[RMDB]
RNA sequence: GGGAACGACUCGAGUAGAGUCGAAAAGCGAUAGCCCCUUGAUGCCAAGCAGGUGGCGGUGAGGGAAAAGCGGAGAGACCGUUUGAUUUGUCAUGGCAAGUCAUCCGUAUAGGACCAUGAGGCAGGAGCCUAUCAUCGAUUUCGAUCGAUGAUAGGCAAAAGAAACAACAACAACAAC
Reactivity to DMS in 0.01 (KOAc 150mM, MgCl2 10mM, bicine 150mM(pH8.5), 24C), signal-to-noise 3, nucleotides 027 to 126: g010c070g010a090u000a140g010c090c020c010c030u000u020g010a290u000g020c030c040a080a180g030c130a060g000g030u010g010g010c050g020g000u070g000a080g000g000g000a030a040a070a130g010c060g000g000a090g000a120g000a080c030c060g020u010u000u000g010a060u000u000u000g000u000c060a120u000g000g000c030a010a040g000u020c030a030u000c020c020g010u010a080u010a080g000g000a100c030c030a070u010g010a050g010g010c050a090g010g010a150
Reactivity to 2A3 in 0.01 (KOAc 150mM, MgCl2 10mM, bicine 150mM(pH8.5), 24C), signal-to-noise 2, nucleotides 027 to 126: g060c040g060a100u070a060g040c020c010c000c000u020u080g070a070u040g030c020c000a080a020g070c080a100g180g080u050g010g050c050g000g020u090g020a090g000g000g120a000a020a090a000g000c030g030g010a060g000a000g040a070c030c010g020u050u020u060g040a090u000u060u070g080u040c050a090u120g070g010c030a010a030g010u000c020a090u020c010c010g050u060a100u050a180g070g000a010c020c000a050u040g020a040g040g040c030a030g000g050a030
The record gives the reactivity of an RNA of 177 nucleotides to DMS and 2A3.